[RMDB]
RNA sequence: GGGAACGACUCGAGUAGAGUCGAAAAGUAAACAGGUUGAGUAGAGUGUGAGCCGCUGCGAUACCAGCUCGAUUUCGAGCCCUUGGCAGCGCGUCGGAAGGACGGGUCCCUGAAUAUAAAAAAGUAAACUUUUCUAGUUAUUCGUAACUAGAAAAGUAAAAGAAACAACAACAACAAC
Reactivity to 2A3 in 0.01 (KOAc 150mM, MgCl2 10mM, bicine 150mM(pH8.5), 24C), signal-to-noise 1, nucleotides 027 to 126: g070u070a060a120a000c040a040g000g080u110u080g080a050g000u070a060g030a080g040u130g030u010g110a040g050c040c020g000c030u000g010c040g000a000u000a080c080c000a010g000c010u020c010g160a230u120u240u290c040g000a000g000c000c010c060u020u010g070g000c030a020g000c010g000c030g020u000c020g030g060a040a020g040g060a020c000g000g010g000u000c010c000c000u020g000a090a030u250a070u250a060a100a050a090a030a080g090u150a100a080
Reactivity to DMS in 0.01 (KOAc 150mM, MgCl2 10mM, bicine 150mM(pH8.5), 24C), signal-to-noise 5, nucleotides 027 to 126: g010u010a030a070a130c080a060g000g000u000u010g000a110g010u000a060g010a070g010u000g010u000g000a130g020c060c030g010c030u000g010c010g010a070u000a070c100c150a180g000c000u000c000g010a300u000u010u000c020g010a010g000c020c070c090u000u000g000g010c020a000g000c010g010c060g010u010c040g000g010a090a070g000g010a060c040g010g010g010u000c020c010c020u010g010a050a070u020a080u020a000a040a070a080a060a130g000u010a090a080